[RMDB]
RNA sequence: GGGAACGACUCGAGUAGAGUCGAAAAUUAUGGCGCUUAUUCCUAUGCACAUCAUUUGGUCGAAGUAGCUGUGCGUUUUGCAGCUCCAAGCGCUAUCAAGAAACGGCGUGGUAUUCAACUACGUGCGGCUUCAGUAAGUCUUCGGACUUACUGAAGCAAAAGAAACAACAACAACAAC
Reactivity to 2A3 in 0.01 (KOAc 150mM, MgCl2 10mM, bicine 150mM(pH8.5), 24C), signal-to-noise 5, nucleotides 027 to 126: u120u050a040u060g000g000c000g010c020u030u000a020u060u060c000c030u040a040u090g080c110a100c010a160u190c030a060u120u090u180g070g030u070c070g060a150a020g020u110a020g040c010u000g000u050g060c080g080u050u060u130u190g030c000a000g000c000u000c010c000a030a030g000c000g000c010u000a030u080c050a100a030g080a160a060a010c020g030g000c000g000u020g000g000u030a090u150u250c070a080a040c010u000a000c010g050u060g220c040g040
Reactivity to DMS in 0.01 (KOAc 150mM, MgCl2 10mM, bicine 150mM(pH8.5), 24C), signal-to-noise 2, nucleotides 027 to 126: u050u050a050u000g000g060c000g000c020u000u000a140u000u010c000c030u000a050u040g000c140a100c160a060u050c110a160u020u000u010g000g010u020c050g010a070a150g010u050a030g060c020u000g000u000g030c280g050u010u010u000u010g030c010a050g040c010u000c030c090a080a040g000c010g020c000u010a020u040c200a080a020g000a030a020a300c030g010g020c000g030u000g000g000u000a150u010u050c210a040a030c030u010a010c000g000u030g000c100g060